[RMDB]
RNA sequence: GGGAACGACUCGAGUAGAGUCGAAAAGCUCUUCUCUCCCCCUCCGGGGUCUCCUCGAAUCGGGCUGGCUCAUCCUCGAUUGCGAGCGGCGGUCCUGAGAACUCUUAUCUUCCUGCUUAGAAGAGGAUUAACGCCACCUUCGGGUGGCGUAAAAGAAACAACAACAACAAC
Reactivity to DMS in 0.01 (KOAc 150mM, MgCl2 10mM, bicine 150mM(pH8.5), 24C), signal-to-noise 1, nucleotides 027 to 129: g000c030u000c020u020u000c010u020c020u030c010c030c000c080c010u030c050c000g000g000g000g000u000c090u000c010c000u020c040g040a000a000u030c070g000g000g000c090u000g050g050c020u020c040a210u000c090c050u020c060g040a000u010u030g030c000g020a070g030c150g000g000c120g050g040u010c000c040u010g020a100g000a100a000c070u000c040u000u000a080u000c130u040u020c030c020u030g050c000u120u030a100g020a020a050g020a020g030g020a120u030u000a090
Reactivity to 2A3 in 0.01 (KOAc 150mM, MgCl2 10mM, bicine 150mM(pH8.5), 24C), signal-to-noise 2, nucleotides 027 to 129: g040c070u010c000u160u000c010u020c050u100c000c000c000c000c000u050c010c050g000g020g000g000u000c000u000c020c000u010c000g000a020a000u000c020g040g010g090c030u040g040g010c000u020c030a090u010c010c010u000c020g000a000u030u120g280c000g010a060g040c190g030g000c060g000g000u020c000c010u020g010a000g050a050a050c030u000c000u130u110a100u130c000u040u060c030c120u080g040c050u180u030a020g000a090a000g000a060g000g000a010u040u070a000